This 207-nucleotide RNA was probed chemically with 2A3 and DMS. Source: RMDB library PDB130, as collected in RNAgym. The 2A3 profile rests on 5,544 reads. Reactivities are given for positions 27 through 156. 2A3 adducts were read by reverse transcription with SuperScript II with manganese. DMS adducts were read by reverse transcription with MarathonRT.

RNA sequence: GGGAACGACUCGAGUAGAGUCGAAAACUACAUAAUCUUCGGAUUAUGUAGAAAAGCGGAUUUACUCAGAAGGGAGAGCACCAGAAUAUCAAAAUGGAGUCCUGUGUUCGAUCCACAGAAUUCGCACCAAAAAGAAUCUCGUCUUCGGACGAGAUUCGGAACAACUGAGAUUCGUCUCAGUUGUUCCAAAAGAAACAACAACAACAAC
Reactivity to 2A3 in 0.01 (KOAc 150mM, MgCl2 10mM, bicine 150mM(pH8.5), 24C), signal-to-noise 7, nucleotides 027 to 156: c000u000a000c000a000u000a000a000u010c010u020u050c140g000g000a000u000u000a000u000g000u000a000g010a010a100a000a010g010c010g010g000a010u020u040u120a180c080u110c090a120g060a240a170g150g040g010a030g000a000g020c020a010c040c050a010g060a130a070u210a080u180c090a090a150a100a190u160g090g010a040g030u030c010c010u010g000u000g020u010u010c020g030a080u000c020c010a020c010a030g020a010a010u010u010c000g000c010a050c020c010a030a110a060a000a040g010a010a000u020c000u000c000g020u010c010u030u140c290g070g000a000c000g000a000g000a000u000u000c010
Reactivity to DMS in 0.01 (KOAc 150mM, MgCl2 10mM, bicine 150mM(pH8.5), 24C), signal-to-noise 1, nucleotides 027 to 156: c010u010a000c000a000u000a000a020u000c010u020u010c300g010g020a010u000u000a010u000g000u000a020g000a020a020a110a140g020c000g030g000a080u000u000u010a220c000u000c050a090g000a170a140g020g020g040a160g000a080g000c020a020c070c040a140g010a090a090u000a110u000c040a060a080a070a120u000g010g010a100g000u000c010c010u030g010u040g010u000u010c060g000a260u010c030c010a040c020a020g010a030a020u000u010c000g000c030a140c030c060a030a090a100a190a120g000a000a010u000c010u000c000g030u000c010u000u000c300g020g020a020c020g020a010g010a000u000u000c000